RNA sequence: GGGAACGACUCGAGUAGAGUCGAAAAGCCUUAUCUUCCAGGUAGUGGAACCAUUGCAGUAUCUCCUCGUGAAAGGAUUCCUCCCUUAGUGUGGCAGAUGCUGGCAGUGCCCUCCCAUGUUCCUGAAGCUCUUGGGUUCACUGGAUGAACUUCCAGAGUGCAGCAUCAUAUUCGUAUGAUGCUGCACAAAAGAAACAACAACAACAAC
Reactivity to 2A3 in 0.01 (KOAc 150mM, MgCl2 10mM, bicine 150mM(pH8.5), 24C), signal-to-noise 1, nucleotides 027 to 156: g020c010c000u030u060a250u300c000u050u000c140c030a050g000g000u030a020g000u060g040g050a050a030c210c000a020u020u000g010c000a000g010u020a000u010c000u040c000c010u000c000g080u040g050a210a040a010g020g010a030u220u110c020c030u090c000c020c000u010u090a010g000u020g010u010g100g040c130a010g020a000u000g010c000u000g060g000c000a000g000u000g000c000c070c000u020c010c030c000a000u040g140u170u060c000c000u000g000a000a000g000c010u000c010u020u010g010g010g000u100u120c110a060c090u030g030g000a020u030g080a160a060c060u030u000c010c000a020g040a020